[RMDB]
RNA sequence: GGGAACGACUCGAGUAGAGUCGAAAAGUAAAUAAAGCGCACCAAGAUGGAGGUGCGCAACCAGCGUGUCCAUGGAUCACGCAUCCACGCGUCUACCAAGACGCGAAUGGUAAUACAAAUAUAAAAACAGUAAAGAUAAGUUCGCUUAUCUUUACUGAAAAGAAACAACAACAACAAC
Reactivity to 2A3 in 0.01 (KOAc 150mM, MgCl2 10mM, bicine 150mM(pH8.5), 24C), signal-to-noise 7, nucleotides 027 to 126: g020u040a010a070a160u140a090a150a020g000c000g020c000a000c000c020a030a040g120a140u260g120g100a110g030g000u000g000c000g000c000a000a000c010c010a020g010c000g010u010g020u010c060c060a160u210g090g010a060u170c020a000c020g000c000a020u030c010c000a020c010g000c000g000u000c000u030a150c020c040a060a020g010a010c000g010c010g000a020a050u020g000g010u010a020a020u080a080c030a020a120a000u210a020u080a160a100a000a020a020
Reactivity to DMS in 0.01 (KOAc 150mM, MgCl2 10mM, bicine 150mM(pH8.5), 24C), signal-to-noise 5, nucleotides 027 to 126: g010u000a070a070a100u010a050a100a130g020c000g010c000a010c000c000a100a100g020a210u000g020g010a170g000g010u000g020c000g030c000a010a020c060c070a140g000c010g020u000g000u010c050c080a100u010g020g010a070u010c020a010c020g020c010a060u000c030c040a080c020g010c000g010u000c000u000a170c300c300a110a020g000a010c000g020c000g010a010a030u010g000g010u000a050a060u010a080c080a050a040a060u010a080u020a030a070a060a050a170